[RMDB]
RNA sequence: GGGAACGACUCGAGUAGAGUCGAAAAAGGUAUUAGCAGCACCAGCACGCAGGAAGUGAUUGAGUAUGGUCAGCAUGCCGACCGACUCGAAGUCGAUGCCGUGCUGGUACUCAAUCCCUACUAUGCCCGUCCCUGGUGCAUUCGUGCACCAGGGACGAAAAGAAACAACAACAACAAC
Reactivity to 2A3 in 0.01 (KOAc 150mM, MgCl2 10mM, bicine 150mM(pH8.5), 24C), signal-to-noise 3, nucleotides 027 to 126: a000g030g010u020a010u020u050a100g130c140a010g000c020a010c000c000a000g000c000a000c010g020c000a020g110g140a150a150g100u110g170a070u080u020g020a000g000u060a230u300g020g010u000c010a010g000c100a160u150g090c040c070g000a000c000c000g040a000c000u010c030g000a110a000g120u080c040g020a080u030g110c130c010g000u000g000c000u000g000g000u000a000c000u000c000a000a000u040c000c020c000u000a010c050u090a060u150g120c000c000